[RMDB]
The record gives the reactivity of an RNA of 207 nucleotides to DMS and 2A3. 2A3 adducts were read by reverse transcription with SuperScript II with manganese. Source: RMDB library OK3TST, as collected in RNAgym. DMS (dimethyl sulfate) methylates the pairing face of unpaired adenines and cytosines.
RNA sequence: GGGAACGACUCGAGUAGAGUCGAAAACGGUCUGUUUCCUGCCCAUAGAAGCCCUGGAGCCAAGUUCUCUUUGAAUUGCAUCCUCUCCUAACCCUGUAAUCCUAAACUGAUAGUUUACACCAGAACAGUUUUUCUGAAACUGGGAGUUUGCUAUGAAUCUCUAAUGUACCUUCGGGUACAUUAGAGAAAAAGAAACAACAACAACAAC
Reactivity to DMS in 0.01 (KOAc 150mM, MgCl2 10mM, bicine 150mM(pH8.5), 24C), signal-to-noise 2, nucleotides 027 to 156: c040g030g010u000c030u010g040u000u000u000c010c040u010g000c000c020c010a170u010a070g000a110a180g030c030c020c040u000g030g020a170g050c040c010a080a210g010u000u020c040u000c030u000u010u000g000a070a120u000u010g020c030a240u000c040c040u000c030u000c050c000u000a110a090c050c020c000u020g000u000a070a130u010c020c030u010a080a080a080c060u020g000a070u020a070g020u000u000u010a100c090a130c020c020a120g020a110a230c020a080g020u000u000u000u010u000c060u020g000a100a070a100c020u000g010g010g010a200g020u000u000u000g000c020u000a130u020g000a180a290
Reactivity to 2A3 in 0.01 (KOAc 150mM, MgCl2 10mM, bicine 150mM(pH8.5), 24C), signal-to-noise 2, nucleotides 027 to 156: c050g040g010u040c050u050g080u030u020u060c040c010u050g040c020c010c010a050u070a070g150a080a020g050c000c000c000u030g020g050a020g000c010c010a070a030g020u040u040c090u010c000u050u050u110g100a100a060u100u030g020c040a080u020c010c010u020c000u010c020c000u050a040a030c040c000c010u050g060u110a070a000u050c010c020u030a000a040a110c020u070g070a050u000a040g020u030u020u000a010c000a000c010c000a010g010a090a010c000a030g050u010u040u030u220u210c020u000g030a140a140a130c010u010g010g020g020a110g040u020u020u050g000c000u030a020u160g070a080a100